The record gives the reactivity of an RNA of 207 nucleotides to DMS and 2A3.
For 2A3 the reverse transcriptase was SuperScript II with manganese.
For DMS the reverse transcriptase was MarathonRT.
The DMS profile rests on 5,110 reads.
The RNA was probed in 150 mM KOAc, 10 mM MgCl2 and 150 mM bicine (pH 8.5) at 24 C.
The 2A3 profile rests on 10,851 reads.
Reactivities are given for positions 27 through 156.
[RMDB]
RNA sequence: GGGAACGACUCGAGUAGAGUCGAAAAACCUUUGUGCUGCUAUGUACAUUGUCAGCUUAACAUACAGCCCAUUGGGCUGGAGUUAAGCUUGGAUUUAUGUACUAAGGCAGCACUCUGGUAAAAGUAUCGGAGAGUAGUUCGCUACUCUCCGAUACAACAGUAUAUAGCACUUCGGUGCUAUAUACUGAAAAGAAACAACAACAACAAC
Reactivity to DMS in 0.01 (KOAc 150mM, MgCl2 10mM, bicine 150mM(pH8.5), 24C), signal-to-noise 2, nucleotides 027 to 156: a040c000c000u000u000u010g020u010g040c000u000g000c000u010a300u000g030u000a010c020a010u000u000g000u000c010a040g010c000u000u000a000a010c010a120u000a300c000a010g030c000c000c010a300u000u010g090g000g030c010u010g000g000a230g010u000u000a020a010g010c010u000u000g040g030a040u000u010u000a010u010g020u000a010c020u000a090a220g000g010c000a000g000c010a000c000u000c010u010g000g010u000a030a040a110a100g020u010a000u000c000g010g010a070g000a040g020u000a020g000u010u010c300g040c010u020a010c000u000c000u000c000c000g000a000u000a000c000a050a130
Reactivity to 2A3 in 0.01 (KOAc 150mM, MgCl2 10mM, bicine 150mM(pH8.5), 24C), signal-to-noise 7, nucleotides 027 to 156: a000c000c000u010u000u010g000u000g000c000u000g010c010u030a020u210g000u000a000c010a000u010u020g010u000c000a000g000c000u000u000a000a010c010a020u300a100c010a020g010c020c010c040a300u170u300g010g000g000c020u010g010g000a020g000u000u010a010a000g010c000u010u080g020g000a010u050u270u220a010u020g000u000a000c000u010a070a080g030g000c000a000g010c000a000c000u000c000u000g000g010u060a110a080a030a070g010u010a000u000c000g000g000a000g000a000g010u010a000g010u060u090c240g020c120u000a000c000u000c000u000c000c000g000a000u000a000c000a000a000